[RMDB]
RNA sequence: GGGAACGACUCGAGUAGAGUCGAAAAGUUUUUAACGCGUGUGCACCCGCUUACACGAAUUACCCAGUUAUUUUCGACUUUACUCGAGUCGUUAUAGCGUGAGUUGGCGGAGUUCUCCGCGAAAUAAGUCCAUUUAUAGUUUCGACUAUAAAUGGACAAAAGAAACAACAACAACAAC
Reactivity to DMS in 0.01 (KOAc 150mM, MgCl2 10mM, bicine 150mM(pH8.5), 24C), signal-to-noise 3, nucleotides 027 to 126: g010u000u010u000u010u020a040a080c190g020c000g000u000g020u000g010c070a090c050c060c090g030c050u000u000a050c030a040c020g000a100a070u010u010a080c050c060c070a140g010u010u000a090u000u000u000u010c010g000a020c000u000u000u000a020c030u000c020g000a000g010u000c000g000u000u000a010u000a070g020c050g020u010g000a080g010u000u010g020g020c020g010g000a070g010u010u000c060u000c020c000g010c010g010a040a050a060u000a100a140